Annotation:
The record gives the reactivity of an RNA of 177 nucleotides to 2A3 and DMS.
RNA sequence: GGGAACGACUCGAGUAGAGUCGAAAAUACUGUCGGAGUACCGGAUACGAGCUCUUCGGCGUAGGCGUGCCGAAGACCGUGGACAACGACCUCGUGGGCACCGAUCACACGCCGGGGUAUCCCUCCGGAAGCACAUGAGAUUCGUCUCAUGUGCUUCAAAAGAAACAACAACAACAAC
Reactivity to 2A3 in 0.01 (KOAc 150mM, MgCl2 10mM, bicine 150mM(pH8.5), 24C), signal-to-noise 2, nucleotides 027 to 126: u110a020c070u090g070u110c030g020g000a030g010u090a230c030c050g000g030a060u060a110c060g010a060g060c080u040c000u120u060c000g010g000c010g010u010a080g020g040c060g000u030g000c010c000g010a020a000g020a010c000c000g000u020g000g060a050c070a100a060c090g100a100c020c000u010c030g030u110g030g030g000c020a010c040c030g070a140u160c020a030c020a000c110g030c020c030g000g010g000g000u040a040u020c010c000c030u020c020c030g050
Reactivity to DMS in 0.01 (KOAc 150mM, MgCl2 10mM, bicine 150mM(pH8.5), 24C), signal-to-noise 3, nucleotides 027 to 126: u000a120c060u000g030u000c050g010g010a130g020u000a110c120c090g000g000a100u000a050c060g010a090g020c210u000c020u010u000c000g010g000c000g040u000a060g020g020c090g030u010g010c000c000g010a050a020g030a020c130c010g010u000g000g010a170c140a110a070c100g000a070c070c070u000c050g000u010g020g020g010c020a000c070c050g000a080u000c130a090c170a030c040g020c020c010g000g010g000g010u000a050u000c040c020c010u000c020c080g020
The data come from the RNA Mapping Database (RMDB), library OK2TST.